[RMDB]
RNA sequence: GGGAACGACUCGAGUAGAGUCGAAAAGGGGUCUACCAAGAAGAGGCUUAGACAUGCUCUGAAGCCUCCACGGAGCAACAGCUAAGCUACCCACCUUCUUGCGUAGACGGAGGCACCCAAAGUUACCCAAGAGCUCUUCGGAGCUCUUGGGUAACAAUCAUCAAGUAUGCUUCGGCAUACUUGAUGAAAAAGAAACAACAACAACAAC
Reactivity to 2A3 in 0.01 (KOAc 150mM, MgCl2 10mM, bicine 150mM(pH8.5), 24C), signal-to-noise 1, nucleotides 027 to 156: g050g020g010g000u020c000u000a000c000c000a000a000g010a000a010g010a010g000g000c010u010u000a020g000a010c100a200u300g000c010u010c010u040g030a060a010g030c000c020u010c000c000a020c000g010g010a010g000c050a140a100c040a070g090c000u000a000a000g000c010u030a070c030c110c090a060c000c030u000u010c000u000u070g070c170g000u000a000g000a000c000g010g000a000g010g000c010a040c000c000c000a060a170a010g000u000u000a010c010c000c010a000a000g000a000g010c010u020c140u300u280c300g060g000a030g000c000u000c010u010u040g000g000g000u000a000a000c000a000a000